[RMDB]
This 207-nucleotide RNA was probed chemically with DMS and 2A3. For DMS, 2,498 sequencing reads were counted. The RNA was probed in 150 mM KOAc, 10 mM MgCl2 and 150 mM bicine (pH 8.5) at 24 C. The data come from the RNA Mapping Database (RMDB), library OK3TST. For 2A3, 2,257 sequencing reads were counted.

RNA sequence: GGGAACGACUCGAGUAGAGUCGAAAAGAUCGGUCAUUCCGUCGACGUCGCACCCACCGAUGACGUUCGCGAAAGCGACGUGUACAAGAACUGGAGCAUCUGACAUGGCCGGAAUCUCGCAGGUCACCAAGGGCGGGCCGAAGACUUUCACGCCGGCCCUCUGUCAUGCAUUCGUGCAUGACAGAGGAAAAGAAACAACAACAACAAC
Reactivity to DMS in 0.01 (KOAc 150mM, MgCl2 10mM, bicine 150mM(pH8.5), 24C), signal-to-noise 1, nucleotides 027 to 156: g020a060u000c000g000g030u000c070a150u000u000c010c020g020u010c000g010a050c040g000u010c020g010c080a230c050c030c070a120c040c050g000a080u000g030a070c070g020u000u000c000g030c000g000a090a100a210g020c000g000a000c020g040u010g000u010a080c050a080a080g000a060a080c060u010g060g030a120g000c130a060u000c090u000g010a070c070a090u020g000g020c010c000g040g030a030a080u000c060u010c060g000c040a160g000g020u000c020a190c040c040a090a080g010g040g020c030g000g000g000c010c070g010a040a180g000a020c040u010u000u000c020a040c020g000c000c010g010g020c050
Reactivity to 2A3 in 0.01 (KOAc 150mM, MgCl2 10mM, bicine 150mM(pH8.5), 24C), signal-to-noise 3, nucleotides 027 to 156: g030a060u080c010g010g040u050c060a100u200u050c050c010g000u030c050g040a020c040g040u010c020g000c020a060c000c030c010a050c040c020g030a030u120g070a070c100g060u090u100c010g000c030g070a090a030a000g000c000g000a010c010g010u030g050u040a090c090a090a000g010a080a030c060u080g040g010a010g000c030a030u020c050u030g010a040c010a090u040g020g000c040c010g050g020a050a090u030c010u010c040g000c080a040g040g010u050c030a030c110c050a080a080g040g030g030c040g000g000g010c010c020g040a060a020g020a030c020u130u150u080c090a040c090g030c030c000g000g010c000